Structure probing data (2A3 and DMS) for a 177-nucleotide construct.
Conditions: 150 mM KOAc, 10 mM MgCl2 and 150 mM bicine (pH 8.5), 24 C.
The data come from the RNA Mapping Database (RMDB), library M2PK50.
The 2A3 profile rests on 1,765 reads.
The DMS profile rests on 1,910 reads.
RNA sequence: GGGAACGACUCGAGUAGAGUCGAAAACGACGUAGUUUCGACUACGUCGACAGGGAAACGAGCCAAGUGGCGCCGACCACUUAAAAACACCGGAAAAUAAAAGAGCCCGUACUUUCGAGUACGGGAAUGUAUAUCAAGCAUUCGUGCUUGAUAUACAAAAAGAAACAACAACAACAAC
Reactivity to 2A3 in 0.01 (KOAc 150mM, MgCl2 10mM, bicine 150mM(pH8.5), 24C), signal-to-noise 2, nucleotides 027 to 126: c030g010a000c000g010u000a010g020u000u050u110c230g080a010c000u000a000c000g000u000c000g000a030c010a020g040g000g060a020a100a080c050g020a020g080c020c030a080a000g000u000g010g000c060g040c010c000g290a300c020c000a000c000u120u140a090a000a000a000a010c070a010c030c000g010g030a060a070a130a000u040a010a070a030a050g090a010g190c000c000c010g000u020a000c000u030u110u200c260g080a000g000u000a000c000g000g010g000a000a000
Reactivity to DMS in 0.01 (KOAc 150mM, MgCl2 10mM, bicine 150mM(pH8.5), 24C), signal-to-noise 3, nucleotides 027 to 126: c030g010a010c010g020u010a010g010u000u000u010c190g000a030c010u000a010c000g020u000c000g020a050c110a090g000g020g010a080a050a110c110g000a140g010c020c060a070a020g020u000g000g010c000g010c000c000g000a150c000c000a010c000u010u000a000a010a010a000a000c230a000c000c010g010g000a030a160a110a110u000a050a100a170a250g000a200g000c000c010c000g020u000a000c000u000u000u020c140g020a040g000u000a010c000g000g000g000a010a010